[RMDB]
RNA sequence: GGGAACGACUCGAGUAGAGUCGAAAAGCUUGUAGCUUCGGCUACAAGCAUCUAAAAUCAGCGGUAAAUAAUUACGAGGCGUUACCGCUGAAGGCCUCGAUACAACCACAUCAUUCGUGAUGUGGAAGGAAGUUCAAGAUUUCGAUCUUGAACUUCCAAAAGAAACAACAACAACAAC
Reactivity to DMS in 0.01 (KOAc 150mM, MgCl2 10mM, bicine 150mM(pH8.5), 24C), signal-to-noise 1, nucleotides 027 to 126: g000c000u000u000g010u000a000g000c010u000u000c240g040g010c000u000a000c000a000a000g000c000a000u010c010u010a030a090a160a140u010c000a000g000c000g000g010u000a010a040a150u020a120a080u010u010a160c080g000a020g000g030c040g010u000u000a030c000c000g000c000u000g000a000a100g000g010c000c010u010c030g020a180u030a080c210a190a180c010c000a000c000a000u000c000a040u000u010c180g000u000g000a010u000g000u000g000g000a010a090
Reactivity to 2A3 in 0.01 (KOAc 150mM, MgCl2 10mM, bicine 150mM(pH8.5), 24C), signal-to-noise 1, nucleotides 027 to 126: g000c000u000u000g000u000a000g000c010u040u050c300g130g000c000u000a000c000a000a000g000c010a010u000c010u060a070a080a010a140u020c010a000g000c020g040g010u040a040a090a130u140a140a230u300u160a150c120g020a020g010g020c010g010u000u020a000c000c000g000c010u000g000a000a000g040g000c000c020u020c020g020a040u040a230c070a030a060c030c000a000c000a010u010c000a010u000u180c210g060u030g010a000u000g000u000g000g010a000a000